[RMDB]
RNA sequence: GGGAACGACUCGAGUAGAGUCGAAAAUUACCCUCAUAGUGUCCAUCAUUGAGGAAGACAAGAAUUCCUACACUCCCUGCCUCAACCAGUGAGUUGUGUAUCUGUGUAGUUAAUUAUCUGGGUGUCACAGAGAGGUAAACUUCGGUUUACCUCUCUGAAAAGAAACAACAACAACAAC
Reactivity to 2A3 in 0.01 (KOAc 150mM, MgCl2 10mM, bicine 150mM(pH8.5), 24C), signal-to-noise 2, nucleotides 027 to 126: u020u030a100c000c030c000u000c050a080u120a090g060u000g080u020c070c040a150u110c020a060u100u050g030a010g030g030a030a010g030a000c050a080a000g030a090a060u020u040c000c000u020a040c010a000c010u060c000c010c000u010g030c010c010u070c040a010a060c020c010a050g160u040g180a120g050u050u060g030u010g020u010a060u010c070u020g040u000g020u050a010g050u100u120a070a070u150u070a040u150c040u030g030g080g030u060g030u020c020a030
Reactivity to DMS in 0.01 (KOAc 150mM, MgCl2 10mM, bicine 150mM(pH8.5), 24C), signal-to-noise 4, nucleotides 027 to 126: u000u010a090c070c000c010u000c060a050u000a080g020u010g010u000c040c050a060u000c050a150u010u010g020a040g010g010a180a070g010a070c100a060a070g000a090a110u000u010c140c010u000a060c080a090c050u000c020c020c020u010g000c080c030u000c090a060a050c150c020a110g020u000g010a060g000u000u010g010u000g000u000a040u000c060u000g020u000g010u000a030g020u010u000a050a040u000u000a100u000c080u000g000g010g020u000g010u000c110a210
This 177-nucleotide RNA was probed chemically with 2A3 and DMS. High DMS reactivity at an A or C suggests that its Watson-Crick edge is free. 2A3 adducts were read by reverse transcription with SuperScript II with manganese. For DMS, 3,440 sequencing reads were counted. It was measured as part of the RMDB library OK2TST.